[RMDB]
RNA sequence: GGGAACGACUCGAGUAGAGUCGAAAAGAUAUGGAAACGUCGACAUGUGCUUAAAGUGUCGGAAACGACAUACAACGCACAACAGCGAGCGUUUCCUAAGUCAAAGAGUCUUCUUCGGAAGACUCAACCCUAAUAAGACCUUCGGGUCUUAUUAGGGAAAAGAAACAACAACAACAAC
Reactivity to 2A3 in 0.01 (KOAc 150mM, MgCl2 10mM, bicine 150mM(pH8.5), 24C), signal-to-noise 4, nucleotides 027 to 126: g020a020u060a010u130g000g020a010a020a000c020g020u010c000g090a170c110a180u210g010u010g000c000u080u150a130a090a160g040u040g000u000c000g000g000a020a030a020c010g000a000c020a010u150a060c090a060a030c100g030c010a010c040a150a070c060a070g070c030g070a060g090c010g010u000u000u000c000c000u000a060a010g040u030c070a150a060a140g010a000g000u000c000u010u020c000u050u050c300g120g000a010a000g000a000c000u000c000a010a000
Reactivity to DMS in 0.01 (KOAc 150mM, MgCl2 10mM, bicine 150mM(pH8.5), 24C), signal-to-noise 3, nucleotides 027 to 126: g020a070u000a300u000g000g010a020a020a010c010g010u000c030g020a080c130a220u000g010u000g020c000u030u000a110a150a180g000u000g000u000c000g000g000a070a060a170c010g000a010c000a020u000a080c200a070a110c300g010c000a000c050a010a060c300a100g000c030g000a090g010c000g020u000u000u000c000c000u000a020a040g010u000c030a130a100a140g000a010g010u000c000u000u010c000u000u000c180g020g000a020a000g000a000c010u010c010a050a040